Chemical mapping of a 207-nucleotide RNA with 2A3.
RNA sequence: GGGAACGACUCGAGUAGAGUCGAAAAGUGAUGGACCGGACUCGCAAGCACCAGAACUUUGGUGUGGUCACAGGCUACGUGGGUGUUGGCAAAAGCCGCUGCUGCCGUGAGUACCGCGAGACGCACCCCAUGACGUUGCUGGUGGAGGUAAGCCCCAGAGUACACAACCAUUCGUGGUUGUGUACUCAAAAGAAACAACAACAACAAC
Reactivity to 2A3 in 0.01 (KOAc 150mM, MgCl2 10mM, bicine 150mM(pH8.5), 24C), signal-to-noise 1, nucleotides 027 to 156: g060u070g010a000u060g000g070a000c020c000g090g090a170c000u000c000g050c000a030a020g000c000a060c010c000a060g090a300a250c130u060u190u080g010g010u050g020u000g020g050u040c040a010c000a100g060g010c030u040a050c060g040u210g060g020g020u150g010u210u220g150g020c030a300a110a020a110g020c030c030g050c010u040g040c070u050g000c000c000g070u070g020a040g080u070a210c180c000g020c000g040a040g000a000c020g010c030a020c000c000c000c000a050u010g010a000c040g050u060u150g010c070u060g030g040u060g000g020a040g080g010u170a050a100g040c000c000c000c040a020
The 2A3 profile rests on 478 reads. It was measured as part of the RMDB library OK3TST.